Annotation
Chemical mapping of a 207-nucleotide RNA with 2A3. Values cover nucleotides 27 to 156. For 2A3, 1,250 sequencing reads were counted. It was measured as part of the RMDB library RNAMAK.

RNA sequence: GGGAACGACUCGAGUAGAGUCGAAAACGCUGGGUGUUCUCGACAUGUGGACACUGAAGCGCGCACGGUGUACCCACAACAGCGAGGAACACCUGUGCUGAAGCGCGCACGGCAACCGAAAGGUGCGAAAAGACUUAUUCCUUCGGGAAUAAGUCAAGUUAGGUGAUGGUUUCGACCAUCACCUAACAAAAGAAACAACAACAACAAC
Reactivity to 2A3 in 0.01 (KOAc 150mM, MgCl2 10mM, bicine 150mM(pH8.5), 24C), signal-to-noise 2, nucleotides 027 to 156: c060g000c020u060g090g000g000u000g000u010u000c040u030c010g140a150c070a210u260g030u010g030g010a000c020a020c000u030g030a240a120g000c010g000c000g020c040a010c010g020g000u000g010u190a280c000c050c020a010c060a130a120c030a040g130c010g110a040g040g060a090a000c010a000c000c010u020g000u020g060c040u070g040a110a020g000c000g000c010g030c000a000c000g100g000c010a050a170c020c000g000a120a000a000g030g000u060g010c040g020a050a090a010a040g000a000c000u010u000a000u000u020c000c000u000u070c200g160g010g000a000a000u000a000a020g010u000c000a000a020